[RMDB]
RNA sequence: GGGAACGACUCGAGUAGAGUCGAAAACGAAGGAAAGCUUGACCAGCUAAUCUUCUGCAGCGCCAUUACGAGGACUGCCCUUAGAGGCUCAUGGCGAUAGGUCACCCCGCCGGUCGGUCAGCUGCUUAUACCCGUGCACGGUUCGCCGUGCACGGAAUCUUAAAGACAGGUUCGCCUGUCUUUAAGAAAAAGAAACAACAACAACAAC
Reactivity to 2A3 in 0.01 (KOAc 150mM, MgCl2 10mM, bicine 150mM(pH8.5), 24C), signal-to-noise 2, nucleotides 027 to 156: c030g010a010a000g040g020a270a110a000g000c000u040u050g020a080c000c010a010g010c010u040a070a090u030c030u010u010c020u060g020c010a030g010c000g030c040c020a080u150u160a090c120g050a050g110g060a070c070u060g010c000c000c000u070u100a070g030a100g090g000c000u000c050a040u100g020g000c040g030a050u100a100g060g000u110c060a090c020c020c000c000g010c010c020g040g040u040c010g010g000u080c050a030g030c040u070g000c020u130u050a040u090a110c000c000c010g000u000g000c000a010c000g000g000u020u020c060g030c080c000g000u000g020c000a000c010g000g010a000a000
Reactivity to DMS in 0.01 (KOAc 150mM, MgCl2 10mM, bicine 150mM(pH8.5), 24C), signal-to-noise 2, nucleotides 027 to 156: c050g000a090a030g020g020a080a130a040g030c030u000u010g020a070c020c040a270g000c010u000a050a140u010c010u000u000c000u010g010c000a070g010c020g020c020c010a150u000u000a120c120g000a160g010g010a060c030u000g000c030c070c020u000u000a080g010a180g000g030c040u000c070a110u010g000g020c000g020a090u000a040g010g000u010c050a150c040c010c000c040g010c040c060g040g000u000c050g020g000u000c040a220g010c020u010g020c010u000u020a130u000a100c120c030c000g020u000g010c000a040c000g000g020u000u000c300g020c010c000g050u020g000c010a000c000g020g000a010a020

Record summary
An RNA of 207 nucleotides, treated with 2A3 and DMS and read out base by base. The DMS profile rests on 5,333 reads. DMS (dimethyl sulfate) methylates the pairing face of unpaired adenines and cytosines. Source: RMDB library M2RFPK, as collected in RNAgym. 2A3 adducts were read by reverse transcription with SuperScript II with manganese. Conditions: 150 mM KOAc, 10 mM MgCl2 and 150 mM bicine (pH 8.5), 24 C.